[RMDB]
RNA sequence: GGGAACGACUCGAGUAGAGUCGAAAAGAUGGGGCAGGUGGGAAUAUACCUCGCCUCCCACUUGCUCCUGAUUGAGAGAUAGACGGCGAGGGUCCGAUCAUACGAUAUAUUCCUGCUCAGCGUAUGAUCGGUUAUGAUACUUAAGACGAGCAGGAUACGUAUCAUCCUACUUCGGUAGGAUGAUACGAAAAGAAACAACAACAACAAC
Reactivity to 2A3 in 0.01 (KOAc 150mM, MgCl2 10mM, bicine 150mM(pH8.5), 24C), signal-to-noise 1, nucleotides 027 to 156: g040a040u110g000g010g020g020c000a010g030g020u000g000g000g120a030a030u270a050u010a130c000c000u000c000g010c010c000u030c000c000c000a000c000u020u000g000c000u000c000c020u010g000a000u040u060g120a050g000a000g010a060u070a090g130a130c070g010g040c000g000a020g010g000g000u000c010c000g000a000u020c000a000u000a000c020g040a040u030a010u000a020u190u100c010c010u010g010c000u020c020a010g000c000g000u000a000u000g000a000u000c000g000g000u000u000a000u000g020a030u030a100c140u180u140a130a010g080a070c020g000a000g000c030a000g000g000a000u020a010